[RMDB]
RNA sequence: GGGAACGACUCGAGUAGAGUCGAAAACGUCGUGAACUAGCGACAAUGCAUUAGGUCCAUCGUUAUCUAACCGAAACAUCGUGACUAGUCCUAGAAUAGAACCACGAGAGGGCGCUGGCAAACAAAGACGGAGUGUAUUAUUCGUAGUGCGCUCCGUAAAAGAAACAACAACAACAAC
Reactivity to 2A3 in 0.01 (KOAc 150mM, MgCl2 10mM, bicine 150mM(pH8.5), 24C), signal-to-noise 7, nucleotides 027 to 126: c060g010u000c000g020u020g060a100a040c040u020a050g010c000g010a010c000a010a030u070g000c020a030u020u070a020g020g000u010c010c010a030u020c030g010u010u040a080u030c040u040a020a050c020c000g040a030a010a020c030a050u040c010g020u020g060a050c010u010a010g030u000c000c010u020a020g010a040a010u040a010g020a040a020c030c000a000c000g010a010g010a030g010g010g000c000g000c000u000g000g000c000a020a030a010c020a010a080a010g100
Reactivity to DMS in 0.01 (KOAc 150mM, MgCl2 10mM, bicine 150mM(pH8.5), 24C), signal-to-noise 9, nucleotides 027 to 126: c120g010u000c040g030u000g000a100a120c110u010a100g010c030g000a040c060a090a060u020g020c080a070u010u020a070g000g000u010c020c030a090u010c080g010u010u010a060u010c080u020a100a100c100c040g010a080a090a080c120a080u010c040g000u000g010a090c030u000a050g000u010c020c040u010a060g000a070a080u020a040g000a080a070c070c020a040c000g000a050g000a090g000g000g000c020g010c020u010g000g000c050a050a060a060c130a060a080a090g000